Source information
Chemical mapping of a 207-nucleotide RNA with 2A3. It was measured as part of the RMDB library M2RFPK. 2A3 is a SHAPE reagent: it acylates the 2'-hydroxyl of flexible nucleotides of all four kinds. Values cover nucleotides 27 to 156. The RNA was probed in 150 mM KOAc, 10 mM MgCl2 and 150 mM bicine (pH 8.5) at 24 C.

RNA sequence: GGGAACGACUCGAGUAGAGUCGAAAAGAAAGAAAGAAAGUAGCUCGCCAGUUAGCGAGGUCUGUCCCCACACGACAGAUAAUCGGGUGCAACUCCCGCCCCUUUUCCGAGGGUCAUCGGAACCAAAAAAACUCAGGCAACUUCGGUUGCCUGAGAACAGAUGUUGAGUGUUCGCACUCAACAUCUGAAAAGAAACAACAACAACAAC
Reactivity to 2A3 in 0.01 (KOAc 150mM, MgCl2 10mM, bicine 150mM(pH8.5), 24C), signal-to-noise 1, nucleotides 027 to 156: g030a000a060a010g070a040a050a020g080a020a130a010g070u080a030g050c010u010c010g010c000c040a210g110u130u110a000g010c000g010a000g000g000u000c010u000g010u000c010c020c060c010a050c010a010c080g010a000c000a000g020a010u050a040a100u090c000g000g000g000u000g010c000a000a000c010u010c000c000c000g010c000c000c000c000u120u160u030u000c000c000g000a010g010g000g000u060c070a000u030c010g000g000a000a000c040c050a070a120a020a020a010a020a060c010u000c000a000g000g000c000a000a000c000u060u080c210g070g000u000u000g000c000c010u020g000a000g000a000a000